This 177-nucleotide RNA was probed chemically with DMS and 2A3.

RNA sequence: GGGAACGACUCGAGUAGAGUCGAAAAGUCGAUGAAGCCGACCGCAUAGGCCAGUUCAAUUUGGCCGUGGACGAACUUCUGGUCCGGGCGUGGGAACGGUGAUCGGCGCAUCGCCGUAAUGCCUUCCACUUCCCUUAUUCUUCGGAAUAAGGGAAGUAAAAGAAACAACAACAACAAC
Reactivity to DMS in 0.01 (KOAc 150mM, MgCl2 10mM, bicine 150mM(pH8.5), 24C), signal-to-noise 8, nucleotides 027 to 126: g000u000c020g010a050u000g020a060a090g030c050c000g010a060c020c010g020c050a120u000a140g020g010c000c010a030g010u010u010c280a090a120u010u000u000g010g010c010c010g020u010g010g010a100c030g010a090a100c110u000u010c100u000g010g010u000c020c030g010g010g000c050g010u000g010g010g000a090a060c060g010g010u000g000a030u000c010g010g020c070g010c090a040u000c020g020c030c010g020u010a030a040u000g000c020c010u000u010c100c090
Reactivity to 2A3 in 0.01 (KOAc 150mM, MgCl2 10mM, bicine 150mM(pH8.5), 24C), signal-to-noise 6, nucleotides 027 to 126: g020u020c010g020a030u050g060a120a040g030c010c000g020a030c010c010g040c050a100u120a170g050g000c010c010a020g000u130u190c100a150a300u090u060u110g020g000c000c000g000u020g000g020a020c030g030a150a100c030u150u080c060u180g030g030u040c010c020g020g030g020c060g020u100g030g030g040a080a050c050g010g010u040g030a060u040c020g080g050c020g010c040a030u040c020g000c000c000g010u080a050a030u070g030c000c000u070u030c040c010
For DMS, 14,226 sequencing reads were counted. DMS adducts were read by reverse transcription with MarathonRT. The data come from the RNA Mapping Database (RMDB), library OK2TRN. The 2A3 profile rests on 11,284 reads. Conditions: 150 mM KOAc, 10 mM MgCl2 and 150 mM bicine (pH 8.5), 24 C.